RNA sequence: GGGAACGACUCGAGUAGAGUCGAAAAGCAUUAAGAUCUAAUAUAUCGCUCGAUAACACAUUUUCAUCUAGAUACACUAGACAUUUUUUAAAGCUAAAAUAGUCUUUAGUAGUAACAGUAACUAUGCGAUUAUUUUCAUCGAUGAUACAUUUCAUCGGAUAUUGCGGGCAUUCGUGCCCGCAAUAUCAAAAGAAACAACAACAACAAC
Reactivity to 2A3 in 0.01 (KOAc 150mM, MgCl2 10mM, bicine 150mM(pH8.5), 24C), signal-to-noise 1, nucleotides 027 to 156: g030c040a040u020u120a150a020g060a030u000c030u090a280a000u190a030u000a000u180c000g000c000u070c090g000a040u100a240a060c120a010c070a220u110u110u130u130c040a090u000c010u150a000g010a070u160a090c070a000c000u000a000g000a070c000a000u070u120u000u000u120u190a030a300a070g010c030u040a040a040a040a040u010a010g000u000c040u110u160u050a040g010u030a010g000u000a040a010c040a100g000u000a000a000c000u040a030u240g000c000g060a010u010u010a010u000u260u030u030c000a150u030c040g000a000u000g000a000u040a070c130a190u220u130u020c000a000u000c000g000